[RMDB]
RNA sequence: GGGAACGACUCGAGUAGAGUCGAAAAAGGACUGAGACUGAUGUUAGUAAAAGUUAGGUAGUCGAUAUGUAUCAGUCGAUAGAAAGCCGACUAGAAACUAGAAGUCCGAAUAGUGGAAAACACUUAAGGGUAUAGUAUACUUCGGUAUACUAUACCCAAAAGAAACAACAACAACAAC
Reactivity to 2A3 in 0.01 (KOAc 150mM, MgCl2 10mM, bicine 150mM(pH8.5), 24C), signal-to-noise 4, nucleotides 027 to 126: a000g040g010a010c020u010g010a020g070a180c040u060g080a040u160g120u170u140a060g050u090a080a040a070a000g040u070u020a150g010g050u120a060g000u030c000g000a040u040a030u190g230u080a110u180c050a080g030u000c000g000a020u030a060g250a070a070a000g030c000c000g000a020c010u000a000g060a050a080a000c010u030a020g010a140a010g020u000c000c010g010a100a080u100a030g000u020g040g040a050a160a080a040c030a000c000u040u050a080a140
Reactivity to DMS in 0.01 (KOAc 150mM, MgCl2 10mM, bicine 150mM(pH8.5), 24C), signal-to-noise 5, nucleotides 027 to 126: a090g000g020a060c030u000g000a190g020a070c040u000g010a130u030g010u010u020a040g030u010a030a180a130a070g000u010u020a090g050g000u000a090g010u000c000g000a030u010a060u030g010u030a100u060c130a120g000u010c020g020a020u010a070g020a070a110a190g010c020c000g010a010c020u000a030g010a220a110a050c000u000a070g000a130a010g000u000c000c020g010a050a070u020a060g000u000g000g010a090a070a100a100c140a010c000u000u000a060a200